RNA sequence: GGGAACGACUCGAGUAGAGUCGAAAAGAAAGAAAAGAAACUUCCGAUGUAGACCCCUAUUCUACGCAUGUACCACGGGUCGGUUUUAGUACAGGCGAUUUCUUCGCGCGAAAAUAGAAGGAAGAAACAUUACGUAUCCUUUCGAGGAUACGUAAUGAAAAGAAACAACAACAACAAC
Reactivity to 2A3 in 0.01 (KOAc 150mM, MgCl2 10mM, bicine 150mM(pH8.5), 24C), signal-to-noise 5, nucleotides 027 to 126: g030a020a060a010g110a030a120a010a010g100a040a080a020c020u060u010c020c010g030a060u110g020u070a040g030a070c010c010c000c020u030a090u060u080c040u040a020c020g040c060a060u090g020u050a040c000c040a040c090g030g010g020u030c010g010g000u070u110u030u090a030g010u020a020c020a040g060g020c010g010a010u050u050u020c030u000u020c020g010c020g000c040g120a150a100a050a000u110a030g090a060a020g070g000a020a030g020a050a040a010
Reactivity to DMS in 0.01 (KOAc 150mM, MgCl2 10mM, bicine 150mM(pH8.5), 24C), signal-to-noise 7, nucleotides 027 to 126: g010a120a090a070g010a090a060a090a150g010a080a120a090c030u000u010c010c020g010a100u020g010u010a070g000a060c050c010c010c090u020a090u020u010c030u020a060c030g000c070a060u020g010u010a060c050c100a100c130g010g010g010u000c030g000g000u010u010u020u010a080g010u000a060c080a080g000g000c000g010a060u010u010u000c030u000u000c010g010c050g000c060g000a050a060a050a060u020a060g020a050a080g010g000a010a050g000a080a050a150

Structure probing data (2A3 and DMS) for a 177-nucleotide construct.
Conditions: 150 mM KOAc, 10 mM MgCl2 and 150 mM bicine (pH 8.5), 24 C.
For 2A3 the reverse transcriptase was SuperScript II with manganese.
Reactivities are rounded to 0.1 and cut off at 0 and 3.